Source information:
An RNA of 177 nucleotides, treated with DMS and read out base by base. The reactions ran in a buffer of 150 mM KOAc, 10 mM MgCl2 and 150 mM bicine (pH 8.5), at 24 C.

RNA sequence: GGGAACGACUCGAGUAGAGUCGAAAAUGAGGAGGUACGAUUCCUCUCUGAACGGGAUGUACUUCUGUAAUUUACCUGUCCCAACCGCAUUCGGGUAUGAGGUAAAGGAUAUGUAUCUGGACGGUGAGCGUAAGGGCGAGUUCGCUCGCCCUUACGCAAAAGAAACAACAACAACAAC
Reactivity to DMS in 0.01 (KOAc 150mM, MgCl2 10mM, bicine 150mM(pH8.5), 24C), signal-to-noise 1, nucleotides 027 to 126: u000g000a300g000g000a040g000g000u000a010c050g010a060u000u000c000c000u000c010u010c220u010g000a240a150c300g000g030g000a010u000g010u000a020c070u000u000c000u000g000u000a210a070u000u000u020a160c110c120u020g000u000c000c000c020a140a090c060c010g000c050a070u000u000c020g000g030g010u000a040u000g040a020g010g020u030a010a070a170g000g030a100u000a020u030g000u000a010u010c000u000g000g000a100c040g010g060u000g000a210